About this RNA
Structure probing data (DMS and 2A3) for a 177-nucleotide construct. 2A3 adducts were read by reverse transcription with SuperScript II with manganese.
RNA sequence: GGGAACGACUCGAGUAGAGUCGAAAAGAUAUGGAACUCCCGUUUAACGAUAAGAAUGUGGUCGGAAACGACCAAUUCUUUUGACGUUGCCGGGAGUUCCUAAGUCAAAAUCGGGCUUCGGCCCGAAGUAUUAGAGCAUGUUCGCAUGCUCUAAUACAAAAGAAACAACAACAACAAC
Reactivity to DMS in 0.01 (KOAc 150mM, MgCl2 10mM, bicine 150mM(pH8.5), 24C), signal-to-noise 7, nucleotides 027 to 126: g010a050u010a300u020g010g000a020a010c010u000c000c000c010g000u010u010u000a010a010c010g020a180u000a020a020g000a020a000u000g020u010g020g010u000c000g010g010a080a130a270c000g010a010c010c000a040a010u000u000c000u000u000u010u000g020a160c080g010u000u000g000c300c020g000g010g000a030g000u000u010c010c000u000a010a080g010u000c040a100a070a150a170u000c010g010g010g010c010u000u010c280g030g010c000c000c000g010a000a030
Reactivity to 2A3 in 0.01 (KOAc 150mM, MgCl2 10mM, bicine 150mM(pH8.5), 24C), signal-to-noise 4, nucleotides 027 to 126: g010a000u080a040u160g000g000a000a000c000u000c000c010c000g010u150u190u090a020a010c010g030a050u010a080a010g060a010a000u300g080u080g300g000u000c010g040g050a150a050a070c010g000a000c000c010a000a000u000u010c000u020u050u020u090g180a080c020g020u010u020g050c000c000g010g030g030a000g010u000u010c000c000u000a000a000g000u000c000a000a000a000a300u060c000g000g000g000c010u120u110c300g170g000c010c010c000g000a020a010

Conditions: 150 mM KOAc, 10 mM MgCl2 and 150 mM bicine (pH 8.5), 24 C. For DMS, 9,883 sequencing reads were counted.